[RMDB]
RNA sequence: GGGAACGACUCGAGUAGAGUCGAAAACAACAGGGAGGUUGGUGGUGGACGAGCCACUCGCCAACCGGGUCAGGUCCGGAAGGUAGCAGCCCUAACGAGCCAGGCACGGGUCGCCGUGCCAGUACAAGUUGGUACAUAUGUUCGCAUAUGUACCAACAAAAGAAACAACAACAACAAC
Reactivity to 2A3 in 0.01 (KOAc 150mM, MgCl2 10mM, bicine 150mM(pH8.5), 24C), signal-to-noise 3, nucleotides 027 to 126: c020a000a010c020a060g040g030g000a060g020g020u030u050g010g010u030g000g010u020g000g070a070c060g030a060g190c010c000a010c000u070c010g000c000c000a000a010c000c010g000g010g010u040c020a010g000g090u010c030c000g020g040a060a030g040g000u040a050g050c070a020g010c040c010c000u020a060a030c050g020a030g020c060c060a060g020g000c010a000c010g030g010g060u160c090g040c080c010g000u010g010c000c010a020g000u020a030c020a090a080
Reactivity to DMS in 0.01 (KOAc 150mM, MgCl2 10mM, bicine 150mM(pH8.5), 24C), signal-to-noise 6, nucleotides 027 to 126: c050a080a100c100a080g000g010g020a160g010g010u000u000g010g020u000g020g030u000g000g000a180c270g010a100g010c010c010a010c020u000c080g020c000c000a020a090c010c000g000g010g010u010c130a060g010g010u000c030c020g010g020a090a120g030g000u000a050g020c100a090g000c060c030c010u000a080a130c120g010a070g010c050c040a140g000g010c010a000c010g020g010g010u010c300g010c020c010g010u000g000c010c010a060g020u010a060c200a080a140